An RNA of 177 nucleotides, treated with DMS and 2A3 and read out base by base. The RNA was probed in 150 mM KOAc, 10 mM MgCl2 and 150 mM bicine (pH 8.5) at 24 C.
RNA sequence: GGGAACGACUCGAGUAGAGUCGAAAACUCAUGCGCUCAGCUAGUCUAGCUAGGUCAGGUACUACUCUACGCUAGGACUACUCUCAUGCAUAUCUAGCAUGUCUCUAGGAGUACGCUCGUACCAUCCAAUCGAUGUAACAUUCGUGUUACAUCGAUUAAAAGAAACAACAACAACAAC
Reactivity to DMS in 0.01 (KOAc 150mM, MgCl2 10mM, bicine 150mM(pH8.5), 24C), signal-to-noise 8, nucleotides 027 to 126: c040u010c040a120u000g010c070g020c050u000c070a070g020c170u000a050g010u000c040u000a030g010c010u000a040g010g010u000c150a070g000g010u000a060c070u010a040c040u010c030u000a030c150g000c020u000a030g010g010a080c040u000a040c060u000c060u010c040a030u000g010c040a090u010a110u000c160u000a100g010c020a040u000g000u000c040u010c050u000a060g000g000a060g020u000a040c100g010c070u000c080g010u000a070c030c030a130u010c110c100
Reactivity to 2A3 in 0.01 (KOAc 150mM, MgCl2 10mM, bicine 150mM(pH8.5), 24C), signal-to-noise 7, nucleotides 027 to 126: c010u010c020a050u130g010c050g020c030u060c070a040g040c070u040a020g030u000c010u020a010g000c010u020a020g030g020u060c070a070g080g030u060a070c040u030a030c000u000c010u070a010c120g000c020u020a020g040g060a030c020u040a040c010u030c010u010c020a020u060g010c020a030u100a110u260c070u070a050g010c010a030u030g060u010c030u000c020u100a040g000g060a030g030u030a050c050g030c040u070c060g020u030a030c010c000a060u070c050c030